[RMDB]
RNA sequence: GGGAACGACUCGAGUAGAGUCGAAAAAAGAUCUCAUAGUUUUAUAAAUGGGAGUUCCUCUGCACAAGCUCUCUUGCCUGCUGCCAUGUAACACCUUACUCUGUUCCUCAUUCUCCUUCUGUCAUGAUUGUGAGGCCUCCCCAGUCAUGUAAAACUGACGUACCAUUACAUUCGUGUAAUGGUACGUAAAAGAAACAACAACAACAAC
Reactivity to 2A3 in 0.01 (KOAc 150mM, MgCl2 10mM, bicine 150mM(pH8.5), 24C), signal-to-noise 3, nucleotides 027 to 156: a000a000g080a040u020c000u000c030a030u070a070g050u060u120u160u190a170u090a080a180a060u050g020g000g000a040g010u080u030c020c000u030c050u120g050c060a040c010a090a090g010c030u030c010u010c020u090u040g050c020c020u050g020c020u020g030c040c010a070u100g030u050a070a010c030a050c050c010u040u060a060c020u050c040u090g040u080u050c010c000u020c030a050u080u010c010u070c020c020u100u060c040u070g120u070c030a050u080g050a060u060u070g070u060g070a060g000g060c010c020u030c000c000c000c000a010g030u050c000a020u040g000u080a000a060a050a060c100u130g020
Reactivity to DMS in 0.01 (KOAc 150mM, MgCl2 10mM, bicine 150mM(pH8.5), 24C), signal-to-noise 1, nucleotides 027 to 156: a100a110g000a070u000c000u000c020a060u010a100g000u040u000u000u010a100u010a040a110a090u000g010g020g000a060g000u000u000c050c010u000c030u000g020c090a100c060a100a100g020c050u010c010u000c000u000u000g040c020c020u020g010c000u000g030c020c050a120u000g000u010a050a100c070a040c020c020u000u010a090c030u000c000u010g000u000u000c020c000u000c040a080u000u000c000u010c010c020u010u000c050u000g000u000c030a070u000g010a080u000u010g000u020g020a070g010g020c290c040u000c000c000c000c000a130g050u030c030a050u000g000u000a000a070a080a100c050u000g000
The record gives the reactivity of an RNA of 207 nucleotides to 2A3 and DMS. Values are in units of 0.01, from 0 to 300, in steps of 10. The DMS profile rests on 3,261 reads. DMS adducts were read by reverse transcription with MarathonRT. Reactivities are given for positions 27 through 156. It was measured as part of the RMDB library OK3TST.